[RMDB]
The data come from the RNA Mapping Database (RMDB), library M2PK50. This 177-nucleotide RNA was probed chemically with 2A3 and DMS. For DMS, 993 sequencing reads were counted.

RNA sequence: GGGAACGACUCGAGUAGAGUCGAAAAGCGUCCUGGUUCGCCAGGACGCAAAUAAAUGCUAGACUGAGACCGUCUAACUCAGAUAACCAGAAAUAGACGGAAAAACUGACUUGUUCGCAAGUCAGAAGCCUAAGUUAACGUUCGCGUUAACUUAGGCAAAAGAAACAACAACAACAAC
Reactivity to 2A3 in 0.01 (KOAc 150mM, MgCl2 10mM, bicine 150mM(pH8.5), 24C), signal-to-noise 3, nucleotides 027 to 126: g010c000g010u010c000c020u010g000g050u030u040c210g020c080c000a000g000g020a000c000g000c000a000a000a000u010a000a020a010u110g020c020u060a030g090a230c010u010g000a010g020a070c010c010g000u030c010u020a220a160c000u010c010a000g020a100u060a080a090c010c010a010g030a030a100a020u000a010g020a010c000g020g020a060a020a000a030a000c010u000g000a000c000u000u010g020u090u100c270g000c110a000a000g000u020c000a000g020a010a010
Reactivity to DMS in 0.01 (KOAc 150mM, MgCl2 10mM, bicine 150mM(pH8.5), 24C), signal-to-noise 1, nucleotides 027 to 126: g040c000g000u000c000c000u000g020g010u010u030c260g010c010c000a020g020g010a000c000g000c000a000a000a090u010a050a020a050u000g010c120u020a100g020a060c000u000g000a030g040a160c000c000g000u010c000u000a010a040c010u010c000a000g000a060u000a090a270c030c000a040g000a060a060a170u000a030g010a030c000g020g000a170a050a040a060a190c000u000g000a020c000u000u010g000u000u010c300g010c020a030a000g000u000c000a000g010a030a090

For DMS the reverse transcriptase was MarathonRT. As a SHAPE reagent, 2A3 marks flexible, mostly unpaired nucleotides at the ribose 2'-OH. The RNA was probed in 150 mM KOAc, 10 mM MgCl2 and 150 mM bicine (pH 8.5) at 24 C.